[RMDB]
RNA sequence: GGGAACGACUCGAGUAGAGUCGAAAACAGUGAUGGAAACAUCACUGAAAAACGUGUGAGCGCAGCACGAAAAAGUCGAUCGAAUACCGAUCGACAAGCGCUAAAGUCAUGCCGAAAGGCAUGACAAGCUCGGAUUUAUGUUCGCAUAAAUCCGAGCAAAAGAAACAACAACAACAAC
Reactivity to 2A3 in 0.01 (KOAc 150mM, MgCl2 10mM, bicine 150mM(pH8.5), 24C), signal-to-noise 3, nucleotides 027 to 126: c000a000g010u000g000a000u000g010g040a030a030a020c000a000u000c000a000c000u000g000a030a000a000a010a000c010g010u010g000u040g040a090g000c000g000c010a010g000c000a010c110g230a060a010a010a000a000g000u000c000g000a010u000c000g000a050a040u180a300c110c000g000a000u010c000g000a000c000a000a010g000c010g000c000u020a070a000a020g010u010c000a000u000g010c000c010g040a070a030a010g000g000c000a000u010g000a000c000a000a000
Reactivity to DMS in 0.01 (KOAc 150mM, MgCl2 10mM, bicine 150mM(pH8.5), 24C), signal-to-noise 2, nucleotides 027 to 126: c030a000g020u000g000a000u010g020g020a140a030a230c000a000u000c000a020c000u040g000a030a130a020a150a140c000g060u000g020u040g000a030g000c030g170c000a300g040c000a000c000g000a070a040a000a000a080g000u000c020g000a000u000c000g050a300a180u050a150c300c020g000a020u030c000g050a000c000a000a100g000c040g000c000u000a190a190a000g000u000c010a000u000g000c010c000g000a150a050a240g000g030c000a000u000g000a000c000a040a060